Structure probing data (2A3 and DMS) for a 177-nucleotide construct. The reactions ran in a buffer of 150 mM KOAc, 10 mM MgCl2 and 150 mM bicine (pH 8.5), at 24 C. For 2A3, 8,033 sequencing reads were counted. It was measured as part of the RMDB library OK1LIB.
RNA sequence: GGGAACGACUCGAGUAGAGUCGAAAAGAAGUGGCAGGGACAUGCCCCAUAAGCUCGUUCUAGCAACAUAUGUUUGGCUAGUUCGAGCGAUUAGUCUAGAGGAGCGUCCUCUCGCCUCUUAACGAGAAUUACCUGAGUACUUCGGUACUCAGGUAAUAAAAGAAACAACAACAACAAC
Reactivity to 2A3 in 0.01 (KOAc 150mM, MgCl2 10mM, bicine 150mM(pH8.5), 24C), signal-to-noise 7, nucleotides 027 to 126: g150a030a000g010u010g020g010c020a010g010g010g000a000c020a050u240g000c010c000c000c010a060u070a120a040g010c000u000c010g000u000u000c000u010a010g020c020a020a060c050a080u300a070u300g170u110u130u080g160g030c000u000a000g010u000u000c000g000a010g000c000g010a000u000u040a030g050u040c100u140a090g010a170g090g020a110g020c010g000u000c000c000u030c010u020c080g000c020c000u000c000u020u020a080a010c070g020a010g120a190
Reactivity to DMS in 0.01 (KOAc 150mM, MgCl2 10mM, bicine 150mM(pH8.5), 24C), signal-to-noise 4, nucleotides 027 to 126: g000a020a040g020u000g010g010c000a050g010g020g000a010c030a110u040g010c000c000c000c010a090u020a110a250g000c000u000c000g000u000u010c000u000a010g010c010a050a040c060a250u040a070u040g010u030u010u030g010g000c000u000a000g010u000u000c000g010a010g020c000g000a010u020u020a120g000u040c140u020a100g000a140g000g000a140g010c070g010u000c000c000u020c040u040c100g010c000c010u000c020u010u010a060a150c070g010a160g000a130